[RMDB]
RNA sequence: GGGAACGACUCGAGUAGAGUCGAAAAGCAUCUUGCUUCGGCAAGAUGCAAAUAACGGUCAGUGCUUGCAGCUAGUCGUAAAUGCUAUCUGGCCUUACGCUAAAACGAAUGCGUUCGCGCAUUCGAACCUUUUACAUUACUUCGGUAAUGUAAAAGGAAAAGAAACAACAACAACAAC
Reactivity to 2A3 in 0.01 (KOAc 150mM, MgCl2 10mM, bicine 150mM(pH8.5), 24C), signal-to-noise 9, nucleotides 027 to 126: g000c000a000u000c000u000u010g010c000u040u050c160g080g000c000a010a000g010a000u000g000c000a000a000a000u030a030a010c040g000g010u010c000a010g000u020g080c060u110u120g030c030a040g030c060u170a060g150u190c070g060u070a050a090a060u110g000c020u030a050u130c010u010g010g000c010c000u000u050a080c100g020c070u160a060a040a040a070c010g000a010a000u010g010c010g010u020u040c280g000c000g000c040a000u000u000c000g000a000a020
Reactivity to DMS in 0.01 (KOAc 150mM, MgCl2 10mM, bicine 150mM(pH8.5), 24C), signal-to-noise 7, nucleotides 027 to 126: g010c000a000u000c000u010u000g000c000u000u010c190g040g020c000a010a010g010a000u000g010c010a010a030a050u000a070a060c210g030g010u000c010a020g010u010g000c080u000u010g000c060a100g020c140u010a080g010u000c140g000u010a050a050a120u000g000c020u010a090u000c020u000g010g000c000c010u000u000a030c160g010c150u010a030a070a120a140c020g000a010a010u000g000c010g010u000u010c220g010c010g010c000a010u000u000c000g000a040a090